An RNA of 207 nucleotides, treated with 2A3 and DMS and read out base by base.
Reactivities are given for positions 27 through 156.
The RNA was probed in 150 mM KOAc, 10 mM MgCl2 and 150 mM bicine (pH 8.5) at 24 C.
The DMS profile rests on 2,149 reads.
RNA sequence: GGGAACGACUCGAGUAGAGUCGAAAACGUUUCGUUCGCGAAACGAAAAAGCGUACUACGCAAGAGGUGAUUGACGACGAUCAGUUUCCCAAAUAGGAAACUGGGAGUCAAUCACUACCCACCUUGCGUAUCGCAAAAAGGAUCUUUCGAGAUCCAACAUUGAGGCCCUAUUCGUAGGGCCUCAAUGAAAAGAAACAACAACAACAAC
Reactivity to 2A3 in 0.01 (KOAc 150mM, MgCl2 10mM, bicine 150mM(pH8.5), 24C), signal-to-noise 3, nucleotides 027 to 156: c010g000u010u000u010c030g010u030u040c170g000c020g160a000a000a010c040g050a100a040a000a040a000g030c040g050u070a100c050u010a000c030g000c010a010a000g000a030g000g000u010g000a000u010u000g010a010c030g030a040c030g020a020u010c010a000g000u000u000u010c010c010c000a100a270a070u250a070g010g000a000a000a000c000u010g000g020g000a000g010u000c000a000a000u000c010a000c000u010a010c020c010c000a050c010c000u010u030g000c010g010u000a030u290c030g020c080a050a000a000a000a060g000g000a000u010c000u080u130u160c290g090a060g000a050u000c000c000a000a020
Reactivity to DMS in 0.01 (KOAc 150mM, MgCl2 10mM, bicine 150mM(pH8.5), 24C), signal-to-noise 1, nucleotides 027 to 156: c010g020u000u010u000c010g050u010u010c210g090c000g030a000a000a010c040g050a000a090a040a160a160g060c010g010u000a070c110u000a000c050g010c000a000a020g050a060g040g010u010g010a000u010u000g040a030c000g000a160c160g050a100u010c000a030g000u020u000u000c000c000c070a010a190a300u000a070g000g000a000a010a000c000u000g030g000g000a100g000u010c000a020a000u000c010a020c000u000a010c010c020c000a300c090c010u010u000g000c000g000u010a000u000c030g000c010a020a040a150a130a050g000g000a030u010c010u000u000u000c170g000a050g000a020u000c010c000a010a270